An RNA of 177 nucleotides, treated with DMS and 2A3 and read out base by base. It was measured as part of the RMDB library TTRDEL. DMS adducts were read by reverse transcription with MarathonRT.

RNA sequence: GGGAACGACUCGAGUAGAGUCGAAAAGAUAUGGAUCCCUGCGAACCUACCCACCGAAGUAAUCGGAAACGAUUAAUUCGAGGGGAGGUAUAGGGAUCCUAAGUCAAAACAUCGCUUCGGCGAUGAAUCGAAUAGGUAUGUUCGCAUACCUAUUCGAAAAAGAAACAACAACAACAAC
Reactivity to DMS in 0.01 (KOAc 150mM, MgCl2 10mM, bicine 150mM(pH8.5), 24C), signal-to-noise 6, nucleotides 027 to 126: g000a040u000a300u010g000g000a000u000c000c000c010u000g030c250g000a100a030c010c000u000a100c000c000c000a050c090c010g000a010a010g010u000a000a000u000c000g010g000a100a090a160c000g000a000u000u000a010a050u000u000c000g010a150g000g000g000g010a010g010g010u000a070u000a000g000g000g000a010u000c000c000u000a000a060g010u010c030a070a100a140a210c010a000u000c000g010c000u000u020c180g020g010c010g010a010u000g000a080a080
Reactivity to 2A3 in 0.01 (KOAc 150mM, MgCl2 10mM, bicine 150mM(pH8.5), 24C), signal-to-noise 4, nucleotides 027 to 126: g020a030u080a040u120g010g010a000u000c000c010c000u020g060c120g220a150a110c010c010u280a300c150c010c000a070c070c010g000a010a000g030u020a010a000u010c010g030g000a070a040a040c000g000a000u000u020a020a060u010u010c000g020a080g000g000g000g010a000g000g010u020a060u130a010g000g000g000a000u000c000c000u000a030a010g020u010c020a000a010a060a110c010a000u000c000g010c010u070u080c250g160g000c000g010a000u010g010a010a130
Reactivities are rounded to 0.1 and cut off at 0 and 3. 2A3 adducts were read by reverse transcription with SuperScript II with manganese.